[RMDB]
RNA sequence: GGGAACGACUCGAGUAGAGUCGAAAAGGCGUGGAGAGAGGGCCGCGGUGCUCUGGAGUAGAGGCUCUGCCUUCGAAACACCAUCGAUCGUCCCUUCUUCUUUACCUUCUUCUGGCUCUUCUUGGAGACGCGACCGGUGGCGCCCCUGCUCGGUUCGGCUAAGUAUAGUGUUCGCACUAUACUUAGCAAAAGAAACAACAACAACAAC
Reactivity to DMS in 0.01 (KOAc 150mM, MgCl2 10mM, bicine 150mM(pH8.5), 24C), signal-to-noise 2, nucleotides 027 to 156: g000g000c040g030u010g000g000a060g020a040g000a090g030g010g040c010c020g040c060g020g000u000g020c020u000c000u010g010g030a240g030u010a150g000a110g020g040c030u000c160u000g020c060c000u000u000c030g000a300a200a200c020a030c090c000a080u000c000g000a070u000c030g000u000c000c000c000u000u000c020u010u000c010u000u000u000a020c020c020u000u010c030u000u000c020u000g070g000c050u000c030u000u010c040u000u010g030g030a070g010a140c030g000c010g000a300c040c000g010g010u000g020g000c020g040c020c020c000c060u000g030c030u010c040g030g030u000u000c050g020
Reactivity to 2A3 in 0.01 (KOAc 150mM, MgCl2 10mM, bicine 150mM(pH8.5), 24C), signal-to-noise 6, nucleotides 027 to 156: g050g010c100g060u080g030g010a010g000a010g020a030g010g000g000c010c000g050c010g000g000u000g000c000u000c010u010g000g000a000g000u010a010g000a020g000g000c040u070c220u300g050c050c000u160u150c010g000a010a010a010c000a020c160c010a000u000c000g050a300u040c000g010u000c000c000c000u010u010c010u020u010c000u020u050u070a040c000c000u010u030c060u040u010c060u130g010g000c000u000c000u040u020c010u010u060g250g020a020g010a020c020g010c010g040a030c000c010g000g030u060g010g020c040g050c010c020c000c020u030g010c030u030c040g050g000u070u090c050g020